[RMDB]
RNA sequence: GGGAACGACUCGAGUAGAGUCGAAAAUAUUCUUUCGGGUCUGUAGUUGCGGAAGCCCAAGGCUUCCAAGUCCAUGGCAGAUGCGGUCGAAAGGAUCCACGUAAGCGGCUGGCAUGCCAGACGUGAGCAUGGCGUAUCCUAGAGGUAAGACGCACCGUCCGCACCCAUUUCGCAGAUCAGACUCUGCGACGGACGAGAGGGCGUGUAGCGCAAGCGAAAACCCCGGUGCGCGAGUGUGGGGUCAAAGACUAGGUCAGUCGAAAGAGACGUCUACCUUCGGGUAGACGAAAAGAAACAACAACAACAAC
Reactivity to DMS in 0.01 (KOAc 150mM, MgCl2 10mM, bicine 150mM(pH8.5), 24C), signal-to-noise 2, nucleotides 027 to 266: u000a060u000u000c000u000u000u000c000g020g000g020u010c000u000g000u000a020g010u000u010g000c270g000g000a000a000g020c000c000c240a140a140g020g000c000u000u000c000c010a030a040g000u020c010c010a080u000g010g000c000a020g000a050u000g000c020g020g010u010c020g000a020a020a010g000g000a020u000c010c010a010c030g000u000a020a090g000c010g020g000c030u000g030g000c020a140u000g000c000c000a000g000a000c000g010u000g000a070g020c030a050u000g000g000c090g000u000a010u010c000c010u010a060g010a120g020g020u000a010a010g000a140c000g000c000a010c000c010g000u000c010c010g000c170a070c210c240c160a140u020u010u000c000g000c020a010g010a060u000c150a170g000a120c260u000c000u000g000c010g000a060c110g000g000a000c010g010a070g020a220g000g000g010c020g000u010g000u000a040g000c000g000c260a080a090g000c000g010a280a170a190a090c000c020c020c000g000g000u000g010c000g020c030g000a130g010u000g000u000g000g000g000g000u000c010a000a210a020g010a000c000u010a030g000g000u000c020a000g010u000c000g000a000a040a030g010a020g030a200
Reactivity to 2A3 in 0.01 (KOAc 150mM, MgCl2 10mM, bicine 150mM(pH8.5), 24C), signal-to-noise 1, nucleotides 027 to 266: u070a010u000u100c000u000u000u000c000g000g010g050u050c020u010g000u010a020g000u020u020g020c010g000g010a010a000g000c020c140c170a150a080g060g000c010u020u050c000c000a010a000g000u000c060c050a300u300g000g000c000a010g000a000u020g020c000g010g030u010c000g010a000a000a020g000g000a000u000c000c010a000c000g010u000a000a000g000c010g040g020c020u010g000g010c110a140u220g090c010c000a000g000a010c000g010u030g010a000g020c000a000u010g000g000c000g010u010a030u040c000c000u050a050g060a060g260g000u010a010a000g020a000c000g010c020a010c000c000g000u000c000c010g010c060a190c040c070c060a170u060u110u030c000g000c000a000g020a070u130c020a090g100a270c080u000c000u040g000c020g000a000c000g010g010a000c000g000a010g010a010g030g000g000c000g000u030g000u030a000g010c000g000c000a000a030g000c000g010a000a010a000a010c010c000c060c000g180g010u000g000c000g000c000g000a010g010u010g000u000g000g030g000g000u000c000a010a000a000g010a010c000u000a000g010g000u020c010a000g000u010c000g000a000a000a000g010a000g000a000
Description:
An RNA of 307 nucleotides, treated with DMS and 2A3 and read out base by base. Values cover nucleotides 27 to 266. In probing experiments dimethyl sulfate is read out at A N1 and C N3, which are open when not base-paired. Conditions: 150 mM KOAc, 10 mM MgCl2 and 150 mM bicine (pH 8.5), 24 C. For DMS, 4,855 sequencing reads were counted. DMS adducts were read by reverse transcription with MarathonRT.